[RMDB]
RNA sequence: GGGAACGACUCGAGUAGAGUCGAAAAAUGAGUGGAUGCCGGAGUGCUACGAGCUCAUCAUUCGUGACAACGCCACCAAGGAACUGGAGAAGGGUUGUGUCAGCGAAUAUGUCUGGCACAAGGCAACCGUCGACCAGCCCAUCACAAUCUCGAAAGACGUAUGCUUUGCGUUCGCGCAAAGCAUACGAAAAGAAACAACAACAACAAC
Reactivity to 2A3 in 0.01 (KOAc 150mM, MgCl2 10mM, bicine 150mM(pH8.5), 24C), signal-to-noise 2, nucleotides 027 to 156: a000u030g000a000g040u070g000g050a010u050g040c030c040g080g100a210g050u070g030c000u040a010c090g060a030g070c040u010c020a080u080c030a000u070u020c030g020u040g060a080c010a060a020c060g010c020c010a010c010c020a100a100g060g030a120a110c050u000g000g080a050g030a200a090g090g000g000u100u120g000u020g010u000c020a020g040c040g040a050a040u130a090u200g090u010c000u020g000g010c010a000c010a000a000g000g000c020a000a060c000c000g090u100c000g040a080c020c100a020g050c020c000c000a060u120c030a040c030a030a170u030c080u050c080g040a060a050a030g060a030

Annotation:
An RNA of 207 nucleotides, treated with 2A3 and read out base by base. For 2A3 the reverse transcriptase was SuperScript II with manganese. The data come from the RNA Mapping Database (RMDB), library OK3TST.